[RMDB]
RNA sequence: GGGAACGACUCGAGUAGAGUCGAAAAUUGAAAUUGAACCGUCCUGUUAUCGAAAGAUAGGCAGAAGAUACGAAAUAUGUGACAGCAUGGGAAGUAAAGGCAGACCGUGGUUCCCUUGAGUAUCUUAAUUAGGGGGACGAGUUCGCUCGUCCCCCAACAUCGUAUCAAUGUUCGCAUUGAUACGAUGAAAAGAAACAACAACAACAAC
Reactivity to 2A3 in 0.01 (KOAc 150mM, MgCl2 10mM, bicine 150mM(pH8.5), 24C), signal-to-noise 2, nucleotides 027 to 156: u080u080g050a020a020a020u090u090g010a040a010c040c020g060u050c000c030u010g040u080u040a080u030c030g020a070a050a030g020a030u040a050g150g000c020a020g020a120a000g020a010u010a030c020g040a030a070a000u190a050u100g070u030g040a020c030a030g050c010a040u040g000g010g050a010a100g030u070a110a100a090g130g000c030a020g050a100c010c020g010u020g020g050u010u030c000c000c000u010u010g000a010g020u020a040u020c010u010u060a090a090u130u220a150g000g000g010g000g000a000c000g010a000g020u060u070c140g010c030u000c000g010u000c000c000c000c000c010a000a000
Reactivity to DMS in 0.01 (KOAc 150mM, MgCl2 10mM, bicine 150mM(pH8.5), 24C), signal-to-noise 3, nucleotides 027 to 156: u000u010g020a080a060a100u010u010g030a090a100c020c020g010u000c030c000u000g030u000u000a080u000c060g030a200a120a180g000a040u000a040g030g020c040a060g000a070a080g000a060u000a080c050g010a150a090a100u000a060u000g020u000g000a110c060a120g020c080a090u000g010g000g010a080a130g030u000a060a060a090g020g010c050a090g020a130c030c050g010u000g000g010u000u000c000c000c030u000u010g000a170g020u000a050u000c050u000u000a060a180u000u000a170g010g000g000g030g020a020c020g000a010g040u000u010c220g050c020u000c010g000u000c010c000c000c000c010a000a030
Structure probing data (2A3 and DMS) for a 207-nucleotide construct. For DMS the reverse transcriptase was MarathonRT. The DMS profile rests on 6,863 reads. The data come from the RNA Mapping Database (RMDB), library M2RFPK. For 2A3, 1,812 sequencing reads were counted. The RNA was probed in 150 mM KOAc, 10 mM MgCl2 and 150 mM bicine (pH 8.5) at 24 C.